[RMDB]
RNA sequence: GGGAACGACUCGAGUAGAGUCGAAAAAUGAGGUCGUACAAUGUGUUGUCAUUUGGGGAAGUUUUAUGACGGUAUGUACGACCAAGGGUAUGUUUGAGUAAACUUCCCCAAAUUCAUGCAUACUCUAGGUUGUCGUUGAUUUCGAUCAGCGACAACCAAAAGAAACAACAACAACAAC
Reactivity to 2A3 in 0.01 (KOAc 150mM, MgCl2 10mM, bicine 150mM(pH8.5), 24C), signal-to-noise 3, nucleotides 027 to 126: a010u180g030a070g000g000u000c000g010u010a010c000a050a080u090g080u030g030u210u170g010u080c000a030u010u030u110g040g000g010g000a010a010g020u000u000u040u090a040u010g010a010c010g000g000u080a010u080g010u010a010c000g010a010c000c000a000a010g010g000g010u000a010u000g000u010u010u030g010a020g000u130a040a030a000c000u020u010c010c000c000c020a000a060a000u040u030c000a000u000g000c000a000u000a020c000u000c010u000a070
Reactivity to DMS in 0.01 (KOAc 150mM, MgCl2 10mM, bicine 150mM(pH8.5), 24C), signal-to-noise 2, nucleotides 027 to 126: a150u050g000a090g020g000u000c000g030u000a000c000a060a060u020g020u030g020u020u050g000u020c030a070u020u010u000g000g000g010g000a020a030g010u040u030u030u020a050u020g010a020c080g010g010u040a070u010g000u000a010c000g000a000c000c020a020a020g010g000g000u000a000u010g000u000u000u000g010a050g010u030a040a100a030c020u000u000c000c000c000c030a000a020a040u030u000c010a010u000g010c010a000u000a000c000u000c000u010a120
Chemical mapping of a 177-nucleotide RNA with 2A3 and DMS. 2A3 adducts were read by reverse transcription with SuperScript II with manganese. For DMS, 8,163 sequencing reads were counted. The reactions ran in a buffer of 150 mM KOAc, 10 mM MgCl2 and 150 mM bicine (pH 8.5), at 24 C. Source: RMDB library OK1LIB, as collected in RNAgym.